RNA sequence: GGGAACGACUCGAGUAGAGUCGAAAAAUCUCCUAGAGUGGAUAUCCUCUGUAACCGGAGGGCAAAACACAAGAUGAGCGAUUGACGAGCUCGUUCGUUUAACGAAUAGUGUAGGGGAGAGUAAGAAAUCAGCACUGUACUUCGGUACAGUGCUGAUAAAAGAAACAACAACAACAAC
Reactivity to 2A3 in 0.01 (KOAc 150mM, MgCl2 10mM, bicine 150mM(pH8.5), 24C), signal-to-noise 1, nucleotides 027 to 126: a020u040c020u050c010c010u020a020g070a060g220u030g000g040a040u010a010u140c000c000u050c000u010g010u020a060a090c120c000g010g000a000g000g010g000c000a070a050a040a000c000a000c000a090a010g060a050u080g000a020g020c000g000a000u010u010g210a190c020g020a000g000c010u000c030g010u000u000c000g000u000u090u120a150a030c040g020a040a000u040a130g110u070g040u080a010g050g000g000g000a000g040a040g040u070a060a000g030a080a200
Reactivity to DMS in 0.01 (KOAc 150mM, MgCl2 10mM, bicine 150mM(pH8.5), 24C), signal-to-noise 3, nucleotides 027 to 126: a130u010c000u010c000c010u000a050g000a190g040u000g000g000a070u000a150u040c000c010u010c000u000g000u000a130a210c300c030g030g030a060g000g010g030c240a070a030a120a140c010a010c040a140a060g000a090u000g010a000g000c000g020a090u010u030g000a150c180g020a240g010c070u000c000g010u020u000c030g000u000u020u000a110a060c080g000a140a030u030a100g000u000g020u010a070g000g010g020g000a040g010a080g010u010a070a080g000a100a160